An RNA of 177 nucleotides, treated with 2A3 and DMS and read out base by base. The reactions ran in a buffer of 150 mM KOAc, 10 mM MgCl2 and 150 mM bicine (pH 8.5), at 24 C.
[RMDB]
RNA sequence: GGGAACGACUCGAGUAGAGUCGAAAAGAUAUGGAUCUCGCUCUUGGAUUUAUUAUCUAGCUCGGAAACGAGCACAGAUAAUUGUCAGAGCAGAGAUCCUAAGUCAAAAGAAGCGUUCGCGCUUCAAGUCCUAUCUAAUGUUCGCAUUAGAUAGGACAAAAGAAACAACAACAACAAC
Reactivity to 2A3 in 0.01 (KOAc 150mM, MgCl2 10mM, bicine 150mM(pH8.5), 24C), signal-to-noise 5, nucleotides 027 to 126: g030a020u070a040u160g000g000a000u010c010u000c010g010c010u010c020u100u190g150g010a070u300u300u110a020u120u000a000u020c010u010a020g000c010u000c000g030g030a070a090a070c020g000a010g000c050a020c060a040g010a000u000a010a010u010u020g050u030c000a000g000a000g000c050a020g010a000g000a000u000c000c000u000a000a000g030u020c030a010a030a060a220g010a010a000g000c000g040u090u190c270g010c010g040c160u010u000c010a010a030
Reactivity to DMS in 0.01 (KOAc 150mM, MgCl2 10mM, bicine 150mM(pH8.5), 24C), signal-to-noise 5, nucleotides 027 to 126: g000a060u000a300u010g010g000a000u000c000u000c010g010c000u000c000u000u000g020g000a050u000u010u000a000u000u010a000u010c000u010a140g000c000u000c000g000g000a110a110a190c000g010a020g010c000a050c200a010g000a010u000a000a000u000u000g000u000c020a030g000a020g010c000a070g010a010g000a000u000c000c000u000a010a080g010u000c030a070a090a120a160g000a020a010g010c000g030u000u020c250g020c010g010c000u000u000c000a070a130